[RMDB]
RNA sequence: GGGAACGACUCGAGUAGAGUCGAAAACGGGGUCGGGGUUGGUGGCGGCGUGGAUGCUGGCGACUGCACGGACCGACCGGCAGCCGCGAGGCGGGUUGUCGGCGGCUCCGUCGACGACCCGAUCUGCGGACACCCAUAAAUUCGUUUAUGGGUGUCCAAAAGAAACAACAACAACAAC
Reactivity to DMS in 0.01 (KOAc 150mM, MgCl2 10mM, bicine 150mM(pH8.5), 24C), signal-to-noise 3, nucleotides 027 to 126: c090g010g000g000g010u010c040g000g000g030g000u030u000g000g020u010g000g000c080g010g020c050g020u020g000g020a110u040g000c000u000g000g010c010g000a040c070u000g020c060a100c020g000g000a180c100c080g020a120c020c020g010g000c020a020g010c020c000g010c020g010a070g020g030c000g000g000g000u000u000g020u010c000g000g010c000g010g020c150u020c090c010g020u000c010g000a030c010g010a010c010c000c000g000a020u010c010u000g010c300
Reactivity to 2A3 in 0.01 (KOAc 150mM, MgCl2 10mM, bicine 150mM(pH8.5), 24C), signal-to-noise 3, nucleotides 027 to 126: c040g010g010g010g060u050c040g000g040g010g060u100u150g070g060u100g040g050c030g030g000c010g030u080g090g080a090u160g000c020u040g070g010c020g060a070c030u080g000c110a050c140g020g000a050c020c050g100a190c000c000g000g000c010a010g020c010c010g060c020g060a080g080g300c030g010g010g000u010u010g000u000c000g010g000c000g030g060c100u110c150c010g000u000c000g000a000c030g000a000c000c000c000g010a050u000c000u030g010c000
The record gives the reactivity of an RNA of 177 nucleotides to DMS and 2A3. The reactions ran in a buffer of 150 mM KOAc, 10 mM MgCl2 and 150 mM bicine (pH 8.5), at 24 C. For DMS, 11,380 sequencing reads were counted.